Structure probing data (DMS and 2A3) for a 177-nucleotide construct. The 2A3 profile rests on 1,755 reads. DMS adducts were read by reverse transcription with MarathonRT. The RNA was probed in 150 mM KOAc, 10 mM MgCl2 and 150 mM bicine (pH 8.5) at 24 C. Reactivities are rounded to 0.1 and cut off at 0 and 3.
RNA sequence: GGGAACGACUCGAGUAGAGUCGAAAAGACACCGUCGUCGAUACGAUAGCUAUGACUAGGGCAACAGUGACCUAGCACGUUAAUCUCCAUAAGAGAUCUUCUGCAAAAAAGGUUUCGGCCGUGUGACUACGUAGGCUGUGUUCGCACAGCCUACGUAAAAAGAAACAACAACAACAAC
Reactivity to DMS in 0.01 (KOAc 150mM, MgCl2 10mM, bicine 150mM(pH8.5), 24C), signal-to-noise 2, nucleotides 027 to 126: g010a110c040a100c030c040g000u000c080g040u010c200g000a140u030a020c030g010a110u000a050g010c020u000a040u000g000a080c100u000a020g000g000g010c000a060a140c120a130g020u000g000a070c020c000u000a080g010c020a070c160g020u000u000a040a050u000c000u000c000c050a210u020a130a240g000a000g000a000u000c030u000u010c050u020g010c120a000a020a090a050a060a050g010g010u000u000u010c040g000g050c010c080g020u030g000u010g000a160c070
Reactivity to 2A3 in 0.01 (KOAc 150mM, MgCl2 10mM, bicine 150mM(pH8.5), 24C), signal-to-noise 1, nucleotides 027 to 126: g020a010c020a010c020c000g020u100c070g010u000c010g000a030u010a170c010g050a070u060a040g000c020u060a040u170g090a300c000u010a040g000g000g050c030a180a020c020a280g060u020g080a030c000c000u000a010g000c010a010c020g010u020u050a050a030u000c000u000c040c040a120u060a270a010g010a010g010a020u000c010u080u030c060u040g050c030a000a030a020a040a040a120g040g000u070u030u030c020g020g000c000c000g160u160g040u070g030a030c000